[RMDB]
RNA sequence: GGGAACGACUCGAGUAGAGUCGAAAACCUAUCCACAAUGAGAUCCCAUCUUGCACACUGUGCUAAUUUGAGAUUCUCAUGCCUCCUACUUGGAGAGAUCUGGACUAGAAGUCAGGGCAUCUGACUCAAUACAUUCGUCAGUUCGCUGACGAAUGAACUACAAGAAUGGGUUCGCCCAUUCUUGUAGAAAAGAAACAACAACAACAAC
Reactivity to DMS in 0.01 (KOAc 150mM, MgCl2 10mM, bicine 150mM(pH8.5), 24C), signal-to-noise 4, nucleotides 027 to 156: c020c020u010a080u000c010c010a040c040a300a070u000g000a050g000a050u010c010c000c010a050u000c070u000u000g050c010a010c020a230c150u010g020u000g010c010u010a020a030u000u000u000g020a040g000a020u010u010c010u000c000a030u000g010c070c000u010c010c000u010a140c220u000u020g020g000a030g030a090g000a070u010c060u000g010g000a080c080u000a070g010a060a080g010u020c020a030g000g000g010c200a050u010c000u000g000a020c000u000c020a070a090u000a150c010a040u010u000c010g010u000c000a010g010u000u010c300g050c020u000g000a040c010g000a000a000u010g020a070a210
Reactivity to 2A3 in 0.01 (KOAc 150mM, MgCl2 10mM, bicine 150mM(pH8.5), 24C), signal-to-noise 9, nucleotides 027 to 156: c000c000u010a060u030c020c010a050c020a110a080u010g000a000g000a010u010c000c000c010a010u000c020u010u020g010c000a020c030a080c190u300g010u000g010c060u190a050a070u010u010u020g010a020g010a020u280u070c000u000c010a010u020g020c000c000u010c010c000u130a300c110u170u280g010g000a010g000a020g020a080u050c060u090g010g020a020c030u050a070g040a160a000g080u000c010a010g030g050g230c090a130u120c100u010g010a000c000u000c020a030a090u100a120c010a010u000u000c000g000u010c000a000g010u020u090c170g020c110u000g000a000c000g000a000a000u000g000a010a020